[RMDB]
RNA sequence: GGGAACGACUCGAGUAGAGUCGAAAAACGCUCUUUAUUACUGCCUGGUGGGGAUGGAAGUCCAUUGACACUGCUGGGAGAAGGAGGUUCAUGCUGGCCAGUUGGGAUGAAAGUCUUAGCUCCCCACGUCCCCGAUAUAUUUCGAUAUAUCGGGGACAAAAGAAACAACAACAACAAC
Reactivity to DMS in 0.01 (KOAc 150mM, MgCl2 10mM, bicine 150mM(pH8.5), 24C), signal-to-noise 2, nucleotides 027 to 126: a120c150g000c030u000c040u010u000u000a130u010u000a160c120u000g020c020c010u000g030g030u000g010g010g030g010a030u020g010g010a170a090g010u010c020c060a060u020u000g010a170c090a130c050u000g000c090u000g020g000g010a080g000a130a070g010g000a060g000g000u010u000c070a110u010g010c080u000g020g020c070c040a050g020u000u000g000g000g010a080u000g010a070a070a110g000u000c020u000u000a060g010c070u000c000c010c000c070a110c250
Reactivity to 2A3 in 0.01 (KOAc 150mM, MgCl2 10mM, bicine 150mM(pH8.5), 24C), signal-to-noise 1, nucleotides 027 to 126: a010c040g040c040u000c030u010u140u040a180u170u140a090c080u100g050c000c000u060g070g000u020g030g040g000g000a000u060g020g030a110a050g050u060c020c010a040u010u110g080a010c010a020c130u030g030c030u020g000g010g000a040g040a020a050g050g030a040g000g010u070u050c020a040u130g010c020u040g080g030c010c000a040g030u110u040g030g000g030a000u000g120a050a050a020g020u000c030u090u010a050g060c000u080c040c010c000c000a050c060